[RMDB]
RNA sequence: GGGAACGACUCGAGUAGAGUCGAAAACACCAGCUCCCCAGCCCCUGGCUCGGGCUGCACCCACCUUGGGCUCUGGGUGCAGAUUCACGGGAUGAAACGGGUUGUGGCUCUGGGGCAGAGGGGCCUGUCGUAUUCUUACAUUCGUGUAAGAAUACGAAAAAGAAACAACAACAACAAC
Reactivity to DMS in 0.01 (KOAc 150mM, MgCl2 10mM, bicine 150mM(pH8.5), 24C), signal-to-noise 5, nucleotides 027 to 126: c100a150c040c020a170g010c020u000c000c010c010c010a090g020c080c000c000c030u000g010g000c020u000c040g020g000g010c010u000g010c010a030c010c010c000a070c130c060u000u000g010g000g010c090u000c040u000g010g000g010u000g000c010a010g010a080u000u000c030a130c050g010g000g010a230u000g010a050a100a130c150g010g000g020u000u010g020u000g010g010c030u000c050u000g020g000g010g010c020a030g010a070g010g010g000g010c060c030u000g000
Reactivity to 2A3 in 0.01 (KOAc 150mM, MgCl2 10mM, bicine 150mM(pH8.5), 24C), signal-to-noise 4, nucleotides 027 to 126: c040a060c010c000a020g010c020u030c010c010c000c000a030g020c010c000c000c010u020g040g000c010u010c020g020g010g000c010u000g000c000a000c010c000c000a030c020c040u070u080g090g050g000c030u030c010u020g040g000g020u060g010c000a000g000a020u130u100c070a070c140g060g000g020a070u120g180a140a140a050c060g010g040g000u100u160g100u130g100g000c010u030c070u060g000g000g010g000c020a010g060a040g040g000g010g030c000c010u070g040
Overview: Chemical mapping of a 177-nucleotide RNA with DMS and 2A3. The reactions ran in a buffer of 150 mM KOAc, 10 mM MgCl2 and 150 mM bicine (pH 8.5), at 24 C. DMS adducts were read by reverse transcription with MarathonRT. The 2A3 profile rests on 9,430 reads.